This 177-nucleotide RNA was probed chemically with DMS and 2A3. Conditions: 150 mM KOAc, 10 mM MgCl2 and 150 mM bicine (pH 8.5), 24 C.

[RMDB]
RNA sequence: GGGAACGACUCGAGUAGAGUCGAAAAUCGACGUUAAUGAAGCAAAUCCAUAAUUGCCAAUGAUGAGCAAUUCGCUAUUGCCGCCUAAAAACGGUUAGCCGGGGCUGCUAGAGCCUUGUUACCAAAGACGUCCCUUUAAAUUCGUUUAAAGGGACGUAAAAGAAACAACAACAACAAC
Reactivity to DMS in 0.01 (KOAc 150mM, MgCl2 10mM, bicine 150mM(pH8.5), 24C), signal-to-noise 7, nucleotides 027 to 126: u020c030g020a080c080g010u010u000a080a090u030g010a110a100g010c040a040a070a300u030c040c040a090u010a040a030u000u000g010c010c010a090a160u020g000a120u030g010a130g010c020a010a020u010u010c210g000c020u010a030u030u010g010c000c000g000c000c010u000a040a050a070a090a300c020g010g000u000u000a030g000c030c250g020g000g000g000c140u000g000c040u000a090g010a070g020c030c040u010u000g010u000u000a090c050c030a040a110a100g000
Reactivity to 2A3 in 0.01 (KOAc 150mM, MgCl2 10mM, bicine 150mM(pH8.5), 24C), signal-to-noise 6, nucleotides 027 to 126: u140c020g050a030c030g010u080u120a090a040u220g070a050a020g030c030a030a030a050u050c030c010a040u080a170a020u080u020g000c000c010a130a120u210g080a110u050g030a110g020c000a010a010u070u040c020g000c020u020a030u050u140g020c000c000g010c010c010u070a050a030a010a020a010c020g000g000u030u020a000g000c000c030g000g000g020g000c010u020g020c040u050a040g020a020g150c010c000u020u040g040u040u050a100c030c020a050a030a010g110